RNA sequence: GGGAACGACUCGAGUAGAGUCGAAAAGGUUUCGACUUCGCGCAUCGAAUCAAGGGAAGCGUGCCGGUGCAGGCAAGAGACCACCGUAAGCGUCGUUGCAGCAAUAUAAGCGCCGAUUCAUAUCAGCGCGACUAUGCUCUCGCUGCCUAAGCGAUGGGAUCUUGUUAAAGUUCGCUUUAACAAGAUCAAAAGAAACAACAACAACAAC
Reactivity to 2A3 in 0.01 (KOAc 150mM, MgCl2 10mM, bicine 150mM(pH8.5), 24C), signal-to-noise 5, nucleotides 027 to 156: g100g010u030u060u070c040g020a030c040u060u060c050g010c000g000c040a060u040c050g070a130a080u130c100a100a120g080g020g030a060a020g030c030g040u020g060c080c010g000g000u010g000c020a010g010g000c000a020a000g020a010g010a020c010c000a000c000c010g110u120a010a010g010c010g010u000c000g020u050u060g000c020a010g000c020a070a060u050a010u030a160a040g000c010g000c010c020g030a010u140u170c090a050u150a030u280c010a020g000c000g000c000g000a000c010u060a040u070g000c010u000c000u020c030g010c010u050g030c010c050u070a060a020g000c010g010a030u060g090g020
Reactivity to DMS in 0.01 (KOAc 150mM, MgCl2 10mM, bicine 150mM(pH8.5), 24C), signal-to-noise 2, nucleotides 027 to 156: g020g030u020u010u010c010g010a150c000u010u000c070g050c090g040c080a140u000c020g000a120a080u000c080a140a220g000g000g030a080a040g010c030g000u000g060c020c000g020g010u010g010c020a110g020g060c020a070a060g030a160g020a070c010c010a060c000c020g020u000a060a090g020c030g000u000c010g000u000u000g000c040a120g000c040a030a060u000a170u000a220a190g000c000g020c000c000g010a020u000u000c170a190u000a100u000c010a030g000c000g020c000g020a100c180u000a070u000g000c000u000c100u000c010g020c020u020g050c010c050u020a040a090g000c020g040a080u010g000g020

Structure probing data (2A3 and DMS) for a 207-nucleotide construct. The data come from the RNA Mapping Database (RMDB), library ARCHII. The RNA was probed in 150 mM KOAc, 10 mM MgCl2 and 150 mM bicine (pH 8.5) at 24 C.